[RMDB]
RNA sequence: GGGAACGACUCGAGUAGAGUCGAAAAGUACUAUGCCCGCCAUUAUUGAUGCAUGCUCCACCUCCCACACCUUAAUAGUUGCUUUGAAGUUUCCUUUCGGUGGGUUCUGCAGCGUCUUUAUCAGAAACCCACUUUAUCAGUUCGCUGAUAAAGUGGGAAAAGAAACAACAACAACAAC
Reactivity to DMS in 0.01 (KOAc 150mM, MgCl2 10mM, bicine 150mM(pH8.5), 24C), signal-to-noise 1, nucleotides 027 to 126: g000u000a060c080u000a050u000g020c070c020c000g000c070c100a040u000u000a030u000u000g000a060u000g000c030a100u000g010c020u010c030c000a050c080c040u010c010c000c010a110c170a090c100c090u000u030a100a050u000a090g020u010u010g000c050u010u000u000g000a080a180g010u000u000u010c000c020u000u000u010c120g030g020u000g010g000g000u010u010c060u000g000c110a070g000c030g020u000c030u000u000u010a050u000c100a050g020a100a070a110